[RMDB]
RNA sequence: GGGAACGACUCGAGUAGAGUCGAAAAUGAUUAUCGUGUGACCUUCGUCGACCCGUAUACAGCUUAUGGGGCCGGAUUCGUUCAGGCGCAUUGUGAGUUGAUGCCGUUUGAUGGAGGAACUCCGGUAGCCCUAAUUUAGUUUCGACUAAAUUAGGGCAAAAGAAACAACAACAACAAC
Reactivity to DMS in 0.01 (KOAc 150mM, MgCl2 10mM, bicine 150mM(pH8.5), 24C), signal-to-noise 5, nucleotides 027 to 126: u000g010a200u010u000a010u000c020g010u010g020u000g020a300c020c020u000u010c020g010u000c020g000a050c020c030c230g020u010a030u000a110c080a040g000c060u000u000a030u010g010g010g010g010c010c000g000g000a020u010u010c160g000u000u000c030a050g010g010c020g010c030a070u000u010g010u000g000a050g010u010u000g000a090u000g000c020c120g010u000u000u000g020a030u010g010g010a040g000g000a170a100c080u000c060c010g000g000u000a040
Reactivity to 2A3 in 0.01 (KOAc 150mM, MgCl2 10mM, bicine 150mM(pH8.5), 24C), signal-to-noise 1, nucleotides 027 to 126: u120g030a050u130u100a020u080c020g010u040g030u030g260a130c000c000u000u010c010g020u010c010g010a020c010c010c000g000u000a020u010a050c010a010g010c010u050u000a020u070g010g010g080g000c010c000g000g000a020u020u050c120g060u070u010c020a040g040g000c060g020c200a080u040u130g030u020g050a030g010u010u040g000a020u000g010c020c010g000u010u020u050g000a010u000g010g020a020g000g030a050a020c040u000c020c010g000g030u030a090